[RMDB]
RNA sequence: GGGAACGACUCGAGUAGAGUCGAAAAGAUAUGGAUGGAGAGCACAUGCCGUUUGACGCUGUUCGGAAACGAACAGCCGAGGCAUGGCUCGUUGAAAUCCUAAGUCAAAGUGCAGUUCGCUGCACAACCAGCAUACAAAGUUCGCUUUGUAUGCUGGAAAAGAAACAACAACAACAAC
Reactivity to DMS in 0.01 (KOAc 150mM, MgCl2 10mM, bicine 150mM(pH8.5), 24C), signal-to-noise 6, nucleotides 027 to 126: g010a030u000a300u010g000g000a020u000g010g010a160g000a020g020c000a090c010a000u000g010c000c000g000u010u000u010g010a170c300g000c010u000g010u000u000c000g000g010a110a080a160c010g020a020a000c010a000g000c000c000g000a020g010g020c000a010u000g000g010c000u000c000g010u000u000g000a140a120a050u000c000c000u000a060a140g000u000c010a060a110a140g000u000g010c000a010g000u010u010c290g010c000u000g010c000a010c010a090a090
Reactivity to 2A3 in 0.01 (KOAc 150mM, MgCl2 10mM, bicine 150mM(pH8.5), 24C), signal-to-noise 5, nucleotides 027 to 126: g040a020u090a040u150g000g000a000u020g090g040a040g010a010g040c040a040c010a300u000g000c000c000g060u130u190u240g020a020c020g000c000u000g000u000u010c000g030g030a070a050a040c000g000a000a000c000a000g000c010c000g000a010g000g000c000a000u000g000g000c000u000c000g000u030u010g020a050a020a010u010c000c000u020a100a030g040u030c060a150a070a030g000u010g000c010a000g000u050u160c210g140c120u000g000c000a000c000a000a020